Conditions: 150 mM KOAc, 10 mM MgCl2 and 150 mM bicine (pH 8.5), 24 C. The record gives the reactivity of an RNA of 207 nucleotides to DMS and 2A3. It was measured as part of the RMDB library OK3TST. For DMS the reverse transcriptase was MarathonRT. The DMS profile rests on 2,754 reads. For 2A3 the reverse transcriptase was SuperScript II with manganese.

RNA sequence: GGGAACGACUCGAGUAGAGUCGAAAAUCAGGCUAUGGCAUCUCUACUUAAUCUGUGCAUUGGAACUGUGACCAGGUGAUGUAGCAAGAAAAGUAUAUGUGAGUGUUGCCUUCUGGAGAAGGCUGUGUCUGGCAUUUAUUUAAGUUUGAAAGGUCAAAGCUUCACAUCAAUUCGUUGAUGUGAAGCUAAAAGAAACAACAACAACAAC
Reactivity to DMS in 0.01 (KOAc 150mM, MgCl2 10mM, bicine 150mM(pH8.5), 24C), signal-to-noise 1, nucleotides 027 to 156: u000c060a070g020g020c040u000a070u010g020g020c060a130u010c060u000c060u000a120c040u010u000a120a090u000c040u010g000u010g000c030a170u000u010g010g040a100a120c130u000g010u010g010a070c040c010a070g020g010u000g020a040u010g020u010a060g020c000a060a100g000a070a100a060a080g000u000a070u000a060u010g020u000g010a070g020u000g010u010u000g090c000c010u010u020c030u010g050g010a200g000a060a070g000g000c040u000g040u010g020u010c020u000g020g000c040a070u000u000u000a060u010u000u000a080a160g010u000u000u000g020a030a050a060g050g000u000c040a070a110
Reactivity to 2A3 in 0.01 (KOAc 150mM, MgCl2 10mM, bicine 150mM(pH8.5), 24C), signal-to-noise 2, nucleotides 027 to 156: u100c020a030g050g000c030u090a040u130g040g000c030a070u000c010u010c010u070a060c000u040u080a100a100u050c010u020g040u030g010c010a060u040u110g110g070a120a080c050u030g050u120g070a050c010c030a020g000g030u030g010a020u110g000u040a070g040c070a090a000g060a050a090a030a030g060u040a040u020a010u250g060u060g070a080g010u090g050u090u030g000c010c000u000u040c040u150g190g000a240g010a110a040g050g030c050u000g040u000g000u040c020u000g010g040c040a000u020u010u030a070u030u120u050a130a050g050u030u090u150g100a130a070a010g000g040u060c010a240a050